Chemical mapping of a 177-nucleotide RNA with DMS and 2A3. Source: RMDB library TTRDEL, as collected in RNAgym.
RNA sequence: GGGAACGACUCGAGUAGAGUCGAAAAGAUAUGGAUUGUCCAGGUAGCCUCUCGGAAACGAGGGAGGGCUAUAAUCUGGCAAUCCUAAGUCAAAAGGGAACACGUAAGUUCGCUUACGUGUUCCCAAGAGUAUUGGAGAGUUCGCUCUCCAAUACUCAAAAGAAACAACAACAACAAC
Reactivity to DMS in 0.01 (KOAc 150mM, MgCl2 10mM, bicine 150mM(pH8.5), 24C), signal-to-noise 3, nucleotides 027 to 126: g010a040u000a300u000g000g000a010u010u010g020u010c010c020a010g020g010u000a030g010c000c000u000c000u010c000g010g010a090a090a190c000g000a000g010g010g030a130g010g000g000c000u000a030u010a270a100u010c020u000g000g020c000a010a000u000c000c010u000a020a050g010u020c020a080a060a140a130g010g000g010a000a010c000a000c010g000u000a010a000g020u000u010c300g000c000u000u000a000c000g010u000g000u000u000c000c000c000a010a000
Reactivity to 2A3 in 0.01 (KOAc 150mM, MgCl2 10mM, bicine 150mM(pH8.5), 24C), signal-to-noise 2, nucleotides 027 to 126: g030a010u100a050u180g010g010a010u020u000g150u200c020c000a020g030g010u010a010g000c000c010u300c010u010c040g080g020a190a130a080c040g030a040g070g230g120a210g070g000g000c010u010a030u050a140a150u150c020u010g000g000c000a010a000u000c010c000u010a050a000g040u020c030a050a000a110a130g000g000g000a010a020c000a010c020g000u000a020a010g010u050u110c190g040c150u010u010a000c010g000u000g010u000u010c000c000c010a000a000
For DMS, 2,706 sequencing reads were counted. High 2A3 reactivity points to a flexible backbone, as in loops and unpaired stretches.